[RMDB]
RNA sequence: GGGAACGACUCGAGUAGAGUCGAAAAGAACAUCAUCAGGUGAUGCCACUACUGCACAUUCCAACACUUUUUAUAAUUAUAUGGUGCAUUAUGUUGUAGCUUUUAAGACAAUAUUAUCAGAUUUGUCUCAAUGCAAUAACCUUAUGAGAAUACCAGCGGACUAUAUCAAUUUCGAUUGAUAUAGUCCAAAAGAAACAACAACAACAAC
Reactivity to DMS in 0.01 (KOAc 150mM, MgCl2 10mM, bicine 150mM(pH8.5), 24C), signal-to-noise 2, nucleotides 027 to 156: g010a160a150c050a140u000c020a050u000c080a090g000g030u020g020a160u000g000c050c210a100c010u000a060c030u010g000c000a030c000a090u010u010c160c000a070a030c000a010c010u000u030u000u010u000a160u010a190a180u000u000a140u000a090u000g010g020u030g020c010a210u000u000a040u000g020u000u000g020u000a040g030c020u000u000u000u000a000a020g010a050c000a020a060u000a100u000u000a200u000c140a190g000a130u000u000u000g010u000c000u010c020a020a100u000g010c040a060a030u010a100a040c000c010u010u000a040u000g000a080g000a120a060u000a080c060c030a050g030c280
Reactivity to 2A3 in 0.01 (KOAc 150mM, MgCl2 10mM, bicine 150mM(pH8.5), 24C), signal-to-noise 5, nucleotides 027 to 156: g050a030a020c010a090u020c000a000u020c050a000g030g010u020g010a040u070g020c010c000a030c030u050a020c010u020g030c010a010c020a060u130u090c050c030a110a050c030a060c080u100u160u090u100u160a130u160a200a120u230u140a130u060a140u280g030g000u010g020c020a020u060u060a020u160g040u050u020g010u030a030g000c040u050u100u050u150a010a010g000a010c000a020a030u040a040u240u170a110u160c040a050g070a200u020u010u010g020u000c010u000c020a020a070u050g000c000a000a060u090a160a030c000c000u000u000a000u020g010a020g050a100a030u070a130c030c000a030g000c050
Structure probing data (DMS and 2A3) for a 207-nucleotide construct.
The reactions ran in a buffer of 150 mM KOAc, 10 mM MgCl2 and 150 mM bicine (pH 8.5), at 24 C.
For 2A3 the reverse transcriptase was SuperScript II with manganese.
For DMS, 2,562 sequencing reads were counted.
Reactivities are rounded to 0.1 and cut off at 0 and 3.
The data come from the RNA Mapping Database (RMDB), library OK3TST.